Structure probing data (DMS and 2A3) for a 207-nucleotide construct. The data come from the RNA Mapping Database (RMDB), library M2RFPK. For DMS, 2,797 sequencing reads were counted.
RNA sequence: GGGAACGACUCGAGUAGAGUCGAAAACGCACUCGCAGCUUAAUAACCUGCGCUGAGCCCUUCUCCCCCAGCUUGCCUGUGUCCUAGGGAAUUGGAAGGUCAUCCUUCACAGGAUCAUGUGGAAGUCAUUACUCGUGAGUGUUCGCACUCACGAGAACUCGAGUAUGUACUUCGGUACAUACUCGAGAAAAGAAACAACAACAACAAC
Reactivity to DMS in 0.01 (KOAc 150mM, MgCl2 10mM, bicine 150mM(pH8.5), 24C), signal-to-noise 2, nucleotides 027 to 156: c050g010c000a060c030u000c010g030c020a040g060c030u020u010a200a090u010a160a110c300c000u000g010c000g030c040u000g040a090g050c020c020c010u000u000c040u020c020c030c000c000c010a090g020c070u000u000g020c000c020u010g000u000g010u000c040c030u040a090g000g030g000a060a120u000u000g030g000a110a070g010g020u000c100a030u000c030c000u020u010c100a160c020a090g000g010a080u010c050a080u000g000u000g040g000a040a300g000u000c030a140u010u000a120c000u000c010g050u000g000a060g000u000g030u000u000c290g000c020a010c000u000c000a000c000g010a010g030a030a070
Reactivity to 2A3 in 0.01 (KOAc 150mM, MgCl2 10mM, bicine 150mM(pH8.5), 24C), signal-to-noise 3, nucleotides 027 to 156: c050g000c000a030c030u040c030g000c020a010g010c020u040u050a070a000u040a040a050c000c010u020g030c010g040c180u020g050a030g030c000c000c000u110u090c060u070c010c000c000c000c010a010g010c020u060u110g040c000c000u020g030u010g000u030c000c030u020a070g030g050g080a120a150u130u050g060g020a020a030g020g050u100c070a100u130c020c000u070u080c060a040c000a040g000g010a050u080c020a010u100g040u050g040g020a000a020g000u020c030a110u060u220a110c010u000c000g000u000g000a000g000u010g040u020u030c090g040c080a000c000u000c010a000c000g010a000g000a000a000